RNA sequence: GGGAACGACUCGAGUAGAGUCGAAAAGAAUAUAAGAGCGCAGUAAAUGUGAGAGCAAACUGCGCCCGGACUGUAGGAUCCGGUGGCACAGCAACGCUCAUUCACAACACGCUGUGCCACUUGAAGACCACUACGACGACUUCGGUCGUCGUAGUGGAAAAGAAACAACAACAACAAC
Reactivity to 2A3 in 0.01 (KOAc 150mM, MgCl2 10mM, bicine 150mM(pH8.5), 24C), signal-to-noise 2, nucleotides 027 to 126: g020a130a030u280a000u040a080a010g010a000g000c000g010c000a020g000u050a040a000a110u040g020u040g020a030g030a000g000c000a130a300a000c000u010g020c010g000c000c000c000g000g040a000c020u090g080u170a070g100g000a090u000c000c000g000g000u000g000g000c000a000c000a000g000c000a070a080c100g030c030u020c030a110u270u150c040a020c020a150a070c030a020c020g010c000u000g000u000g000c020c000a010c000u000u090g020a050a000g040a010
Reactivity to DMS in 0.01 (KOAc 150mM, MgCl2 10mM, bicine 150mM(pH8.5), 24C), signal-to-noise 1, nucleotides 027 to 126: g000a060a170u180a050u000a020a130g000a000g000c000g000c000a000g000u000a020a060a100u000g000u000g110a300g000a260g000c000a000a050a000c000u020g130c000g030c000c000c000g010g000a080c080u000g000u030a020g030g000a150u000c100c130g090g000u000g040g000c000a000c000a030g000c060a150a180c270g090c230u080c210a000u000u000c070a040c270a100a000c190a080c230g000c000u030g040u000g050c110c000a000c100u000u000g000a160a000g100a300
This 177-nucleotide RNA was probed chemically with 2A3 and DMS. For 2A3 the reverse transcriptase was SuperScript II with manganese. It was measured as part of the RMDB library OK1LIB. Reactivities are given for positions 27 through 126.